[RMDB]
RNA sequence: GGGAACGACUCGAGUAGAGUCGAAAAGCUGCUGCAUAAAUUCAUCAACCUUGGUCGCAUCUAUCGUACAGGAGAUUCCGAAACGUAUGUGUGCACGCUGCACUUUGAAUCCGCAUUGAGGGUGGUACUUGUCGUCGGGGUUCGCCCCGACGACAAGAAAAGAAACAACAACAACAAC
Reactivity to 2A3 in 0.01 (KOAc 150mM, MgCl2 10mM, bicine 150mM(pH8.5), 24C), signal-to-noise 1, nucleotides 027 to 126: g090c140u020g000c000u000g050c020a020u190a210a150a000u000u200c020a060u000c020a010a070c000c010u020u020g000g050u010c050g000c020a100u170c000u040a070u110c070g000u120a140c070a110g070g000a220g150a220u140u170c000c000g060a070a070a000c020g000u070a190u080g100u000g000u140g100c000a000c000g180c090u000g000c000a000c090u110u000u000g040a110a100u020c020c020g000c190a150u000u000g010a060g000g020g030u100g000g000u000a020

Structure probing data (2A3) for a 177-nucleotide construct. Conditions: 150 mM KOAc, 10 mM MgCl2 and 150 mM bicine (pH 8.5), 24 C. For 2A3 the reverse transcriptase was SuperScript II with manganese.